[RMDB]
The data come from the RNA Mapping Database (RMDB), library OK2TST. An RNA of 177 nucleotides, treated with DMS and 2A3 and read out base by base. For 2A3, 10,382 sequencing reads were counted. The RNA was probed in 150 mM KOAc, 10 mM MgCl2 and 150 mM bicine (pH 8.5) at 24 C. For DMS the reverse transcriptase was MarathonRT. Reactivities are given for positions 27 through 126.
RNA sequence: GGGAACGACUCGAGUAGAGUCGAAAAGUACCACGUGAUGUAAUGCGUUAAAUCGGCAACGAGCGGCGCGGUAUUCGUGAUCUCUGGGGCUUGGGGGAUCUCAUGGCGUGCGACUUCGUGCCCAUGCUGUGAUUGGAUAUUUCGAUAUCCAAUCACAAAAAGAAACAACAACAACAAC
Reactivity to DMS in 0.01 (KOAc 150mM, MgCl2 10mM, bicine 150mM(pH8.5), 24C), signal-to-noise 6, nucleotides 027 to 126: g010u000a170c020c010a090c060g010u010g010a090u010g010u010a100a090u010g010c010g010u000u000a040a090a110u000c160g010g000c120a070a090c030g000a050g010c150g010g010c010g020c010g000g000u010a060u000u000c130g020u010g000a040u000c010u000c020u000g010g000g010g010c080u010u000g010g010g000g000g000a060u000c020u000c020a050u000g000g000c050g020u000g000c050g010a060c080u010u000c040g020u000g010c000c000c060a070u010g020c240
Reactivity to 2A3 in 0.01 (KOAc 150mM, MgCl2 10mM, bicine 150mM(pH8.5), 24C), signal-to-noise 6, nucleotides 027 to 126: g020u030a060c000c020a020c030g050u040g040a120u110g060u210a160a050u160g020c010g000u020u150a120a160a090u130c070g010g000c050a090a070c060g010a010g000c060g020g010c020g000c010g040g090u070a110u060u150c080g020u030g030a030u000c020u000c010u050g110g010g030g000c040u050u070g060g010g000g000g000a010u010c020u010c030a040u050g070g010c030g010u050g030c010g070a110c030u100u090c060g040u030g010c000c010c010a060u160g030c050